[RMDB]
RNA sequence: GGGAACGACUCGAGUAGAGUCGAAAAGAAAGAAAGAAAGAAGUGCUCUUUGAUUACAGUUGUUCAACCAGUUACUAAUCUAACUAAUUGUAACUGGUUGAACAACUGAACCCAAAGGGUGCAAAAAAAAGAACCUCUUUUUCGAAAGAGGUUCUUUAAAAGAAACAACAACAACAAC
Reactivity to DMS in 0.01 (KOAc 150mM, MgCl2 10mM, bicine 150mM(pH8.5), 24C), signal-to-noise 3, nucleotides 027 to 126: g000a070a120a110g000a130a110a120g010a100a080a120g010a130a180g010u000g000c000u000c000u000u010u000g010a080u000u010a300c000a000g000u000u000g010u000u000c000a000a000c000c000a010g000u000u000a000c000u070a020a030u010c010u010a150a130c270u070a110a020u000u000g000u000a000a000c010u000g000g000u010u000g000a000a000c000a000a000c000u000g000a000a050c300c110c010a000a000a000g000g010g040u000g000c010a000a000a030a090a050